[RMDB]
RNA sequence: GGGAACGACUCGAGUAGAGUCGAAAAGAAGUGUCGGGGCAGUCGCGUGUUCGUACAUCCACGGGCACCGGUAGUACCUGGUUCGGCGGGGAGUACGGACCGGAGACUAGGCGCGGUUGCCUGUGGGCCGCGUUUCUAGGUUCGCCUAGGAACGCGGAAAAGAAACAACAACAACAAC
Reactivity to 2A3 in 0.01 (KOAc 150mM, MgCl2 10mM, bicine 150mM(pH8.5), 24C), signal-to-noise 8, nucleotides 027 to 126: g110a060a020g040u040g030u130c000g020g000g010g000c020a030g040u060c030g000c050g040u040g030u060u050c020g010u040a040c030a120u030c000c010a000c010g010g000g000c000a000c000c010g030g010u010a020g000u040a130c010c010u030g000g010u010u000c000g020g020c040g010g110g070g040a090g050u110a180c000g000g000a000c000c000g000g010a110g010a020c010u020a030g100g130c150g000c000g210g000u140u160g000c000c000u010g000u010g000g000g000
Reactivity to DMS in 0.01 (KOAc 150mM, MgCl2 10mM, bicine 150mM(pH8.5), 24C), signal-to-noise 3, nucleotides 027 to 126: g010a130a060g010u000g020u000c020g000g020g000g020c050a050g030u020c020g000c070g010u020g000u000u000c020g030u000a080c150a120u030c010c010a010c010g000g000g010c000a040c000c020g010g020u000a020g010u010a090c020c010u000g000g010u000u000c010g020g020c040g000g020g030g000a170g020u020a070c000g000g010a000c000c020g000g000a070g020a010c010u000a040g030g030c120g010c010g000g000u020u020g040c010c000u020g020u000g010g000g020